[RMDB]
RNA sequence: GGGAACGACUCGAGUAGAGUCGAAAAAACGGUGGUGAUCAAGACACUGAAAUGAGCGAAGCAGUCUCUUAUAUCCAGCCUUUAUUGGAAGAAUCCUCGAGAAUGUACCGCAAUUUAAACUACUGGAGAGCGAUAAAUCAUUCGUGAUUUAUCGCUCAAAAGAAACAACAACAACAAC
Reactivity to 2A3 in 0.01 (KOAc 150mM, MgCl2 10mM, bicine 150mM(pH8.5), 24C), signal-to-noise 2, nucleotides 027 to 126: a000a010c070g000g010u030g000g040u120g030a080u100c070a030a000g030a050c020a000c030u020g000a020a130a160u130g010a100g110c050g080a060a040g110c010a000g010u000c000u000c020u040u050a120u020a010u200c020c010a020g000c070c000u150u150u130a210u150u060g040g030a050a070g030a100a060u040c000c030u020c020g020a020g030a050a090u120g010u000a010c020c020g000c030a000a000u000u040u110a190a130a030c030u300a060c010u040g000g030a010
Reactivity to DMS in 0.01 (KOAc 150mM, MgCl2 10mM, bicine 150mM(pH8.5), 24C), signal-to-noise 2, nucleotides 027 to 126: a020a010c100g000g000u010g000g030u000g030a050u010c160a050a050g010a070c060a040c110u000g010a060a060a030u030g020a100g000c010g010a080a090g010c060a040g020u000c150u010c020u010u010a140u020a120u030c010c010a240g010c080c070u000u000u000a140u010u030g020g000a090a060g020a080a100u000c000c040u000c080g090a110g000a090a030u000g000u010a170c080c010g000c090a040a040u010u040u010a030a100a100c210u000a110c060u000g010g010a300